Overview
The data come from the RNA Mapping Database (RMDB), library OK1LIB. An RNA of 177 nucleotides, treated with 2A3 and DMS and read out base by base. DMS adducts were read by reverse transcription with MarathonRT. Reactivities are rounded to 0.1 and cut off at 0 and 3. 2A3 adducts were read by reverse transcription with SuperScript II with manganese.
[RMDB]
RNA sequence: GGGAACGACUCGAGUAGAGUCGAAAAGAACGCAUCAUUCAUGCUAUCAGCGUAUGGAAUGAGCCUCUACUUUUUCGCUGAUAGGUAGGUUCAUGUAUUGCGGAACGUGAAGGCUCACGAUGUGUUAGAUGGUUAUGUUAUUCGUGACAUAGCUGUCAAAAGAAACAACAACAACAAC
Reactivity to 2A3 in 0.01 (KOAc 150mM, MgCl2 10mM, bicine 150mM(pH8.5), 24C), signal-to-noise 9, nucleotides 027 to 126: g080a020a000c000g000c000a010u010c000a000u030u020c000a010u040g020c000u030a070u110c040a020g040c010g040u060a090u070g020g030a050a060u050g000a000g000c000c000u010c010u030a090c040u110u110u040u040u090c010g000c020u030g030a030u020a030g040g090u090a040g020g070u070u090c030a030u140g100u130a090u040u250g040c020g020g010a020a010c010g010u020g020a040a000g010g000c000u000c000a010c010g000a010u010g010u000g010u030u020a030
Reactivity to DMS in 0.01 (KOAc 150mM, MgCl2 10mM, bicine 150mM(pH8.5), 24C), signal-to-noise 9, nucleotides 027 to 126: g000a050a010c020g010c010a010u000c000a010u010u010c020a090u000g000c000u000a090u010c120a070g010c090g010u010a040u020g000g000a050a120u010g000a010g010c000c000u000c030u000a090c150u000u020u020u020u010c010g020c010u020g010a020u000a010g010g020u010a070g010g020u010u020c060a050u020g020u020a070u020u020g010c030g000g000a020a020c300g000u000g000a040a040g000g000c010u000c010a160c040g010a010u000g010u000g000u000u000a050